[RMDB]
RNA sequence: GGGAACGACUCGAGUAGAGUCGAAAACUCUCAUCUCCUACAGGCUUUGGUCUUCUCUCCAGACCCACUGCUGCUCUCAAAACAAGUGUAACUUCUAUGACAACAAAGACCUGGAAUGCGUGACCAAUGUGAGGUUCUGCCAUCACUUUGCAUGAGCCUACGAAGUAUCGUUCGCGAUACUUCGUAGAAAAGAAACAACAACAACAAC
Reactivity to DMS in 0.01 (KOAc 150mM, MgCl2 10mM, bicine 150mM(pH8.5), 24C), signal-to-noise 2, nucleotides 027 to 156: c030u000c020u000c020a160u020c030u000c020c000u000a130c010a090g000g020c030u020u010u000g020g000u000c030u010u000c050u000c040u000c000c000a120g010a140c010c020c070a100c060u000g000c010u000g010c020u010c060u000c020a080a100a030a140c090a070a100g000u000g020u000a060a110c050u000u000c030u000a090u010g050a150c070a100a120c060a070a110a100g010a130c040c010u000g010g000a050a060u000g010c030g050u000g010a100c070c030a070a040u010g010u000g010a110g070g000u010u000c040u000g010c040c030a100u010c010a090c040u020u000u000g010c060a080u000g020a170g040c120
Reactivity to 2A3 in 0.01 (KOAc 150mM, MgCl2 10mM, bicine 150mM(pH8.5), 24C), signal-to-noise 4, nucleotides 027 to 156: c030u010c010u010c020a050u020c040u050c030c010u060a060c030a040g050g000c040u060u070u080g010g020u030c020u120u030c050u020c010u020c000c010a070g020a060c010c010c020a050c040u040g020c010u000g010c000u000c010u030c080a030a080a030a050c040a050a060g040u080g040u170a080a100c020u040u050c020u060a070u190g040a080c040a080a000c020a030a260a050g060a080c010c000u020g040g040a060a040u090g030c020g040u030g020a020c020c000a050a080u060g010u030g060a030g020g000u030u080c050u110g040c000c000a090u040c020a010c040u060u070u100g020c040a050u080g030a000g050c050

Conditions: 150 mM KOAc, 10 mM MgCl2 and 150 mM bicine (pH 8.5), 24 C.
Structure probing data (DMS and 2A3) for a 207-nucleotide construct.
2A3 adducts were read by reverse transcription with SuperScript II with manganese.
Values are in units of 0.01, from 0 to 300, in steps of 10.